Source information:
This 177-nucleotide RNA was probed chemically with DMS and 2A3. Reactivities are given for positions 27 through 126. Reactivities are rounded to 0.1 and cut off at 0 and 3. Source: RMDB library TTRDES, as collected in RNAgym.

[RMDB]
RNA sequence: GGGAACGACUCGAGUAGAGUCGAAAAGAUAUGGAUGAUUCCCGAGCGAUAAGCUGGUGUCGGAAACGACACUCAGCUUUUGACGCUCGGAAUCAUCCUAAGUCAAAAGCAAGAGUUCGCUCUUGCAUCCACUACGAUAGUUCGCUAUCGUAGUGGAAAAAGAAACAACAACAACAAC
Reactivity to DMS in 0.01 (KOAc 150mM, MgCl2 10mM, bicine 150mM(pH8.5), 24C), signal-to-noise 5, nucleotides 027 to 126: g000a030u000a300u010g000g000a020u000g000a020u000u000c170c040c070g010a010g020c000g010a140u000a010a010g000c000u000g020g010u010g010u000c000g000g010a100a080a170c010g000a020c000a000c010u010c000a000g000c000u000u000u010u010g010a250c120g010c000u000c010g010g000a010a010u010c000a010u010c000c000u000a010a080g000u000c030a100a100a140a140g000c010a010a010g000a030g010u000u000c270g010c020u000c000u000u000g010c000a090
Reactivity to 2A3 in 0.01 (KOAc 150mM, MgCl2 10mM, bicine 150mM(pH8.5), 24C), signal-to-noise 4, nucleotides 027 to 126: g020a010u060a020u130g000g010a000u010g000a000u040u010c120c130c060g000a010g000c050g130a100u050a260a010g000c010u000g000g020u000g000u010c010g040g020a080a040a040c010g000a000c020a010c040u160c020a020g000c000u030u010u030u070g040a030c110g000c010u000c010g000g000a000a000u000c000a000u000c000c000u000a010a000g020u000c010a070a030a070a080g010c000a010a000g010a010g040u100u170c300g100c150u010c000u000u000g000c000a020